[RMDB]
RNA sequence: GGGAACGACUCGAGUAGAGUCGAAAACACGGUUACGUCCGUGGGCAUGGCAUAAAAACUAUUUGCACAUAGAGAUGGUCAUCCGUCUUGCUUCUGUGCAAAUAGUUACUGCCCGAAAGGGUAGUAGAUCACAGUCCGUAUUCGUACGGACUGUGAUAAAAGAAACAACAACAACAAC
Reactivity to 2A3 in 0.01 (KOAc 150mM, MgCl2 10mM, bicine 150mM(pH8.5), 24C), signal-to-noise 8, nucleotides 027 to 126: c000a000c000g040g080u200u300a100c120g070u060c020c000g000u040g010g010g000c060a110u100g080g000c050a070u240a130a100a010a010a010c000u000a000u010u000u000g010c010a000c000a020u120a010g010a000g000a010u020g010g050u200c060a170u180c040c000g010u000c010u020u060g070c030u060u150c030u010g010u000g000c000a000a000a000u000a000g000u000u000a000c000u000g000c000c010c000g060a090a030a020g000g000g000u000a010g000u010a040g030
Reactivity to DMS in 0.01 (KOAc 150mM, MgCl2 10mM, bicine 150mM(pH8.5), 24C), signal-to-noise 5, nucleotides 027 to 126: c020a010c010g000g010u010u040a080c210g010u030c000c000g030u010g000g010g020c070a060u010g010g010c150a110u030a030a050a070a100a040c000u000a000u000u000u000g010c000a010c000a030u020a120g000a010g000a010u010g000g000u040c290a230u040c010c000g000u000c010u010u010g010c210u010u000c220u010g010u000g010c000a010a000a000u010a000g000u000u000a000c000u000g020c000c000c010g000a090a090a160g000g000g000u010a010g000u010a030g010
The data come from the RNA Mapping Database (RMDB), libraries RFM100 and RFMREP. Chemical mapping of a 177-nucleotide RNA with 2A3 and DMS. For DMS the reverse transcriptase was MarathonRT. The RNA was probed in 150 mM KOAc, 10 mM MgCl2 and 150 mM bicine (pH 8.5) at 24 C.